[RMDB]
Chemical mapping of a 177-nucleotide RNA with DMS and 2A3. The data come from the RNA Mapping Database (RMDB), libraries RFM100 and RFMREP. 2A3 adducts were read by reverse transcription with SuperScript II with manganese. The RNA was probed in 150 mM KOAc, 10 mM MgCl2 and 150 mM bicine (pH 8.5) at 24 C.

RNA sequence: GGGAACGACUCGAGUAGAGUCGAAAAAAGGCAAGUGUGUUCCUGGAGAGGUUACUGAAUCUGGAGCUGCUUUUAGGGAGUUGCAGAUGGCGCAGGCCUCCCUUCCUCCUCAAGGAAGCCAAAGACAUGACUAUAUGAACUUCGGUUCAUAUAGUCAAAAAGAAACAACAACAACAAC
Reactivity to DMS in 0.01 (KOAc 150mM, MgCl2 10mM, bicine 150mM(pH8.5), 24C), signal-to-noise 7, nucleotides 027 to 126: a090a040g000g020c060a080a080g010u010g010u030g010u000u010c020c010u000g010g000a090g010a050g000g000u000u010a130c040u000g000a110a030u010c020u000g000g000a030g010c020u000g000c020u000u030u030u040a100g010g000g000a040g030u010u010g000c020a020g000a030u000g010g020c170g000c060a060g010g000c030c000u000c010c030c010u010u000c020c010u010c090c070u010c140a080a050g000g020a040a070g000c050c030a050a080a060g000a090c180a130
Reactivity to 2A3 in 0.01 (KOAc 150mM, MgCl2 10mM, bicine 150mM(pH8.5), 24C), signal-to-noise 7, nucleotides 027 to 126: a000a000g100g000c110a070a060g040u060g010u010g030u160u010c000c000u010g010g010a180g000a010g060g030u100u180a080c000u030g070a040a020u000c000u010g010g070a010g000c000u160g050c020u130u170u100u200a110g040g010g020a010g000u010u020g100c010a010g000a030u020g080g000c120g000c030a000g010g030c000c000u000c000c010c010u000u010c000c000u030c000c020u120c060a050a020g030g000a020a030g010c030c030a070a090a000g050a010c060a100